[RMDB]
The record gives the reactivity of an RNA of 207 nucleotides to 2A3. Source: RMDB library M2RFOK, as collected in RNAgym. The RNA was probed in 150 mM KOAc, 10 mM MgCl2 and 150 mM bicine (pH 8.5) at 24 C.
RNA sequence: GGGAACGACUCGAGUAGAGUCGAAAAAGCACGGUUUUUGAGGACGCAUUUUGUCCGUGCGGUAAUGCCCUCCUUUACACUUUCUCGCAUGGUGCGGGAGUUUGGAGAGGAAACAAAAGCUAGUCUCGAUAGGCGGUUAACUUCGGUUAACCGCCAACCUGCAUAUCUACUUCGGUAGAUAUGCAGGAAAAGAAACAACAACAACAAC
Reactivity to 2A3 in 0.01 (KOAc 150mM, MgCl2 10mM, bicine 150mM(pH8.5), 24C), signal-to-noise 4, nucleotides 027 to 156: a010g000c000a000c000g010g030u010u010u010u000u000g100a120g030g020a020c040g000c150a130u000u010u010u000g010u010c000c010g000u000g000c010g010g050u110a050a040u300g000c010c000c000u010c020c000u090u130u110a090c040a030c040u100u150u020c040u030c010g050c030a070u220g300g010u280g120c000g010g010g000a000g010u010u030u010g010g000a060g010a020g000g010a030a000a000c000a000a010a000a000g050c010u080a030g000u000c010u000c010g060a120u130a130g000g000c000g000g010u010u010a000a000c020u020u050c180g060g000u010u000a000a000c010c000g000c000c000a000a000